[RMDB]
RNA sequence: GGGAACGACUCGAGUAGAGUCGAAAACGUCGUGAACUAGCGACAAUGCCGUAGAUCCAUCGUUAUCUAACCGAAACAUCGUGACUAGUCGUAGAAUAGAACCAGGAGAGGACGCUGGCAAACAAAGACGGGGUGUUUGAUUCGUCGAACGCCCCGUAAAAGAAACAACAACAACAAC
Reactivity to DMS in 0.01 (KOAc 150mM, MgCl2 10mM, bicine 150mM(pH8.5), 24C), signal-to-noise 8, nucleotides 027 to 126: c150g020u000c030g020u020g000a090a100c140u020a140g000c030g000a020c040a090a070u020g010c020c010g010u010a060g010a040u010c030c040a100u010c040g010u010u000a060u000c040u010a080a120c090c030g000a100a070a100c140a070u020c060g010u000g000a110c020u000a050g010u010c060g000u010a060g010a080a060u020a060g010a100a110c080c040a100g010g000a060g010a070g000g000a030c050g000c030u000g000g000c120a070a080a070c130a040a090a110g000
Reactivity to 2A3 in 0.01 (KOAc 150mM, MgCl2 10mM, bicine 150mM(pH8.5), 24C), signal-to-noise 7, nucleotides 027 to 126: c070g000u010c010g010u040g090a140a080c070u050a100g020c000g020a010c010a020a050u110g030c000c000g010u040a030g000a070u010c010c000a040u020c070g020u030u050a060u060c010u040a030a100c030c030g060a070a030a020c040a050u070c030g060u050g040a050c040u030a040g040u050c050g060u040a030g040a110a050u070a070g050a040a020c020c020a010g000g050a080g030a030g040g010a000c010g000c040u020g000g000c010a010a070a040c070a010a090a010g130

This 177-nucleotide RNA was probed chemically with DMS and 2A3. Conditions: 150 mM KOAc, 10 mM MgCl2 and 150 mM bicine (pH 8.5), 24 C. For DMS, 20,472 sequencing reads were counted. 2A3 is a SHAPE reagent: it acylates the 2'-hydroxyl of flexible nucleotides of all four kinds.